[RMDB]
RNA sequence: GGGAACGACUCGAGUAGAGUCGAAAAUGGACCGUCAAUGAUGUGCUAAGUUCUAGUUGCACAUGACACUUAACCACUAUUGGUAUGUUUCUUGAUCUGUAAAAUGGGAAAUAUACUAGAUCUUAACAUCUAUAACAUUUAUGUGUGUGUGUGUGUGAGUUAAGCAUUGAUUCGUCAAUGCUUAACUAAAAGAAACAACAACAACAAC
Reactivity to 2A3 in 0.01 (KOAc 150mM, MgCl2 10mM, bicine 150mM(pH8.5), 24C), signal-to-noise 9, nucleotides 027 to 156: u090g040g030a030c030c030g030u080c060a110a150u160g050a070u020g030u020g030c040u120a070a090g050u080u070c050u060a050g040u070u110g010c020a000c010a020u050g040a030c020a000c030u120u140a080a050c020c020a040c070u120a110u150u120g030g000u060a040u050g030u010u030u000c030u020u080g090a100u010c040u050g100u160a030a070a110a140u110g040g020g020a010a050a010u080a000u010a020c020u020a020g020a030u010c000u090u100a060a050c020a030u010c040u120a110u070a190a060c040a090u090u160u080a140u150g060u020g010u010g000u010g000u000g000u000g000u000g010u010g000
Reactivity to DMS in 0.01 (KOAc 150mM, MgCl2 10mM, bicine 150mM(pH8.5), 24C), signal-to-noise 3, nucleotides 027 to 156: u000g020g020a130c040c040g050u000c090a110a120u000g020a060u010g010u000g010c020u010a120a110g030u000u000c060u020a130g020u000u000g030c030a070c050a050u010g020a070c050a050c040u000u000a090a080c040c030a080c050u000a130u000u000g030g010u000a050u000g020u000u000u000c010u000u000g010a090u000c090u020g010u000a060a100a090a090u010g010g010g010a030a050a040u000a060u000a040c020u000a040g010a040u000c010u010u000a070a090c040a030u000c040u000a100u000a060a090c070a120u000u010u000a040u030g010u000g000u000g020u010g000u000g000u000g000u000g000u030g000
The record gives the reactivity of an RNA of 207 nucleotides to 2A3 and DMS.
DMS adducts were read by reverse transcription with MarathonRT.
The DMS profile rests on 9,137 reads.
As a SHAPE reagent, 2A3 marks flexible, mostly unpaired nucleotides at the ribose 2'-OH.
The reactions ran in a buffer of 150 mM KOAc, 10 mM MgCl2 and 150 mM bicine (pH 8.5), at 24 C.
For 2A3, 15,215 sequencing reads were counted.